RNA sequence: GGGAACGACUCGAGUAGAGUCGAAAACGAUUAGCAUUCGUGCUAAUCGAAUCAGGUAGUACCUAUCUCUAUUACCUGUAGUGGCCUACGUCCGGACAGAGAAUCGAGUCCUGUUCGCAGGACUCAAAUUGGAACGCAAUUUCGAUUGCGUUCCAAUAAAAGAAACAACAACAACAAC
Reactivity to 2A3 in 0.01 (KOAc 150mM, MgCl2 10mM, bicine 150mM(pH8.5), 24C), signal-to-noise 2, nucleotides 027 to 126: c000g040a000u000u000a000g010c000a000u000u070c200g120u080g000c010u000a010a000u000c000g000a000a060u070c000a000g000g000u000a000g000u010a040c010c030u130a120u190c100u010c000u010a040u030u010a000c000c000u030g030u050a080g040u030g070g070c010c010u040a030c050g040u000c040c060g040g040a040c050a050g110a010g070a090a070u190c110g000a020g000u000c010c000u000g000u020u030c260g010c070a000g020g000a000c000u000c000a000a020
Reactivity to DMS in 0.01 (KOAc 150mM, MgCl2 10mM, bicine 150mM(pH8.5), 24C), signal-to-noise 2, nucleotides 027 to 126: c010g000a010u000u000a000g000c010a030u000u010c270g020u000g020c000u000a000a010u000c000g000a060a040u020c010a010g020g020u000a010g010u000a050c190c120u000a140u000c090u010c100u000a010u000u000a010c010c000u020g020u000a090g020u010g010g010c020c000u010a050c170g000u020c040c050g010g000a070c160a110g000a140g010a080a060u020c190g000a000g020u000c000c000u000g000u020u000c150g010c000a030g000g000a010c000u000c000a010a040